Background: An RNA of 207 nucleotides, treated with 2A3 and read out base by base. The data come from the RNA Mapping Database (RMDB), library M2RFOK. Conditions: 150 mM KOAc, 10 mM MgCl2 and 150 mM bicine (pH 8.5), 24 C.
RNA sequence: GGGAACGACUCGAGUAGAGUCGAAAAAUCAGAGCGCGCUAUCAUGCAAACUAGGAUUGUCUGCUCAUGCACAGAACCAACUACCGAUAACUAACAGUGCAUGAAGGUUAGUUAUUCCAUAUUAAUUAAAACUCGUAAUUCUUCGGAAUUACGAGAAGGGUUAUAUGGUCUUCGGACCAUAUAACCCAAAAGAAACAACAACAACAAC
Reactivity to 2A3 in 0.01 (KOAc 150mM, MgCl2 10mM, bicine 150mM(pH8.5), 24C), signal-to-noise 2, nucleotides 027 to 156: a000u040c050a040g000a030g070c000g000c000g000c030u060a120u190c040a050u160g040c020a050a110a000c050u060a050g070g010a090u050u040g090u070c030u010g010c000u000c000a010u060g040c000a000c010a020g100a240a100c020c010a130a060c090u230a130c040c060g020a000u000a010a000c010u000a000a000c000a000g060u010g070c000a000u050g020a020a020g020g000u010u010a000g000u010u010a000u050u100c020c020a020u060a050u270u300a140a050u170u050a130a030a110a110c010u000c000g000u000a000a010u010u000c000u000u040c080g020g000a000a000u000u000a000c000g000a000g000a000a010